Structure probing data (2A3) for a 207-nucleotide construct. For 2A3, 600 sequencing reads were counted. The RNA was probed in 150 mM KOAc, 10 mM MgCl2 and 150 mM bicine (pH 8.5) at 24 C.
RNA sequence: GGGAACGACUCGAGUAGAGUCGAAAAACCGAAGGUUCGCCUUCGGUAAAAAGCGUACUACAUUUCGCCAUUGAGACAACAGCACGUCCCAAAUAGGACGUGACAUGUCUCUGUGGACCCGAAAUGUAUCGCAAAAAUAGUGACUUCGGUCACUAAAGCUGUUUCUAUGCUUCGGCAUAGAAACAGCAAAAGAAACAACAACAACAAC
Reactivity to 2A3 in 0.01 (KOAc 150mM, MgCl2 10mM, bicine 150mM(pH8.5), 24C), signal-to-noise 1, nucleotides 027 to 156: a000c000c000g030a010a010g000g000u040u190c150g080c000c000u020u020c000g000g000u010a000a000a000a000a070g060c050g030u130a060c010u000a010c000a000u020u000u020c020g000c000c000a000u030u000g000a000g000a000c010a040a040c000a040g070c000a000c020g000u010c050c060c000a300a300a000u210a090g000g000a000c010g020u000g010a040c000a020u030g000u000c000u000c000u050g000u010g000g230a020c300c010c000g070a020a000a000u050g000u000a000u300c040g000c000a030a040a040a040a040u060a000g000u000g000a000c000u020u020c300g040g020u000c050a000c000u170a040a190a000